[RMDB]
RNA sequence: GGGAACGACUCGAGUAGAGUCGAAAACAGAUCCGAUGGCUGAUAAACUACUUGUAGCAGCUGCAUUUAUUAUUCUUGUAGAAAUGCAUAUCGCGCCAUCUUGGGUAGUUAUUCUUAUUAUUAGUCAAAAUCAUAGGAUCUUCGGAUCCUAUGAUUUAAAAGAAACAACAACAACAAC
Reactivity to DMS in 0.01 (KOAc 150mM, MgCl2 10mM, bicine 150mM(pH8.5), 24C), signal-to-noise 3, nucleotides 027 to 126: c120a180g010a090u020c010c030g020a130u000g000g020c000u020g000a020u000a050a080a080c040u000a020c040u010u000g040u010a060g030c180a100g020c170u000g000c000a010u000u000u010a040u020u000a060u010u020c210u010u010g010u000a030g010a020a010a010u000g000c010a120u000a130u000c100g020c110g010c010c020a020u000c080u000u000g010g010g020u010a030g000u010u010a100u010u000c090u010u010a100u000u000a100u000u000a070g000u010c040a060
Reactivity to 2A3 in 0.01 (KOAc 150mM, MgCl2 10mM, bicine 150mM(pH8.5), 24C), signal-to-noise 2, nucleotides 027 to 126: c000a030g070a110u050c030c030g030a080u100g000g000c010u020g000a010u040a090a120a010c020u060a030c010u020u080g120u110a040g000c050a030g060c010u010g000c010a000u000u040u050a200u090u070a140u260u190c060u090u200g070u060a040g030a050a060a020u020g000c010a010u030a020u160c050g000c000g020c070c000a040u030c080u060u050g010g010g000u000a020g000u010u080a090u140u020c050u040u110a160u140u000a030u060u060a190g030u010c000a000

This 177-nucleotide RNA was probed chemically with DMS and 2A3.
The 2A3 profile rests on 1,088 reads.
The RNA was probed in 150 mM KOAc, 10 mM MgCl2 and 150 mM bicine (pH 8.5) at 24 C.
It was measured as part of the RMDB library OK2TST.
For DMS, 2,661 sequencing reads were counted.